[RMDB]
RNA sequence: GGGAACGACUCGAGUAGAGUCGAAAAGUGAUGAUCGCCAUUGCAAUUGGCCUGGUUGCAGCCUCGAUCGGUGCCUACGUCACCUGAUUGAACUGCUGCCUGAAAGCAAAGCCCCGGAUCAUCCGGAGGAUGGUCACCAUUUCGAUGGUGACCAUCCAAAAGAAACAACAACAACAAC
Reactivity to 2A3 in 0.01 (KOAc 150mM, MgCl2 10mM, bicine 150mM(pH8.5), 24C), signal-to-noise 1, nucleotides 027 to 126: g140u090g020a010u020g000a000u020c020g000c040c030a040u020u160g120c080a090a160u110u020g000g050c000c000u010g040g000u000u030g000c010a010g030c000c110u010c010g020a000u000c000g000g000u000g010c050c120u210a190c120g110u110c030a010c010c030u070g000a000u000u020g040a050a030c000u010g010c000u000g000c000c020u020g000a130a050a010g010c030a100a000a070g040c020c020c030c060g020g010a040u040c000a020u000c000c010g090g040a050
Reactivity to DMS in 0.01 (KOAc 150mM, MgCl2 10mM, bicine 150mM(pH8.5), 24C), signal-to-noise 3, nucleotides 027 to 126: g010u000g030a020u010g000a020u000c020g020c020c020a030u000u000g040c230a120a120u000u000g000g020c000c000u010g020g000u000u000g010c000a010g010c130c150u000c000g010a010u000c000g000g020u000g020c040c120u030a150c260g010u010c000a000c000c000u010g040a000u000u000g000a060a120c060u010g000c010u000g000c000c020u000g010a080a060a140g010c090a050a070a150g010c040c010c030c020g010g000a040u020c040a020u010c000c100g010g000a260
The record gives the reactivity of an RNA of 177 nucleotides to 2A3 and DMS. The reactions ran in a buffer of 150 mM KOAc, 10 mM MgCl2 and 150 mM bicine (pH 8.5), at 24 C. The 2A3 profile rests on 2,533 reads. It was measured as part of the RMDB library OK2TST. DMS adducts were read by reverse transcription with MarathonRT.